Annotation: The record gives the reactivity of an RNA of 177 nucleotides to 2A3 and DMS. The DMS profile rests on 2,859 reads. The RNA was probed in 150 mM KOAc, 10 mM MgCl2 and 150 mM bicine (pH 8.5) at 24 C. For 2A3 the reverse transcriptase was SuperScript II with manganese. For 2A3, 2,452 sequencing reads were counted.

[RMDB]
RNA sequence: GGGAACGACUCGAGUAGAGUCGAAAAUCUGCUAGUGCUCCCAACGAAAGUUGAUAGCGAUGUGCACGUUUAGGAGAUAAAUAGCUAGUAUCUUUCUACUCGGAUUCCCCUCUGUCGUCAUAGAGGGCAUAAGGAGCAGGUUCGCCUGCUCCUUAUGAAAAGAAACAACAACAACAAC
Reactivity to 2A3 in 0.01 (KOAc 150mM, MgCl2 10mM, bicine 150mM(pH8.5), 24C), signal-to-noise 3, nucleotides 027 to 126: u010c010u050g040c000u020a010g010u030g040c000u020c010c030c000a000a010c010g090a060a040a010g030u060u060g060a130u160a110g080c090g130a140u150g050u070g120c030a010c070g010u070u070u100a050g000g020a010g010a020u080a060a230a080u240a060g040c020u020a010g010u020a100u200c010u000u200u010c010u000a000c000u000c000g050g000a060u080u090c000c010c000c000u000c010u000g020u000c020g020u020c000a010u040a050g010a010g010g030g000
Reactivity to DMS in 0.01 (KOAc 150mM, MgCl2 10mM, bicine 150mM(pH8.5), 24C), signal-to-noise 3, nucleotides 027 to 126: u000c060u010g020c020u000a050g010u000g000c020u010c010c080c020a020a010c030g010a130a110a200g010u000u000g000a130u000a090g000c070g000a090u010g000u000g020c030a070c040g010u010u010u010a030g000g000a040g000a050u000a030a090a090u010a060g020c030u010a030g000u000a020u010c010u000u000u010c000u000a000c000u000c010g000g010a130u010u000c110c000c000c010u000c000u000g000u000c050g010u000c200a010u000a020g020a020g000g000g000